[RMDB]
RNA sequence: GGGAACGACUCGAGUAGAGUCGAAAAGAUAUGGAUCCGGUAGACAUGAAUACCGGUCGGAAACGACCGUGUAUUCAACAGCUAUUCGGAUCCUAAGUCAAAACACUGUGCGUUCGCGCACAGUGAAGAUGGAGAAGAAGUUCGCUUCUUCUCCAUCAAAAGAAACAACAACAACAAC
Reactivity to DMS in 0.01 (KOAc 150mM, MgCl2 10mM, bicine 150mM(pH8.5), 24C), signal-to-noise 4, nucleotides 027 to 126: g010a010u000a100u010g000g000a010u000c000c000g000g020u010a000g010a040c070a280u020g010a010a010u000a000c010c000g000g010u000c000g010g000a020a010a060c000g010a000c000c000g020u020g010u000a000u000u000c010a100a070c280a130g000c000u000a000u000u020c010g020g000a010u000c010c000u000a000a060g000u000c010a120a130a110a210c010a010c000u000g010u000g010c000g020u000u020c290g010c020g010c000a010c000a010g030u000g010a020a090
Reactivity to 2A3 in 0.01 (KOAc 150mM, MgCl2 10mM, bicine 150mM(pH8.5), 24C), signal-to-noise 5, nucleotides 027 to 126: g000a010u020a000u060g000g010a000u010c000c010g020g000u010a010g040a100c220a300u300g000a010a000u010a010c000c000g000g000u000c000g010g010a020a020a000c010g010a000c000c010g050u050g010u090a010u000u000c000a000a020c040a010g000c010u020a010u200u300c020g000g000a000u010c000c000u000a000a000g010u000c020a040a040a080a070c010a000c000u010g000u000g000c010g030u050u110c300g020c010g000c120a000c000a000g000u000g000a010a030
Chemical mapping of a 177-nucleotide RNA with DMS and 2A3. 2A3 adducts were read by reverse transcription with SuperScript II with manganese. The DMS profile rests on 7,324 reads. Source: RMDB library TTRDES, as collected in RNAgym. For DMS the reverse transcriptase was MarathonRT.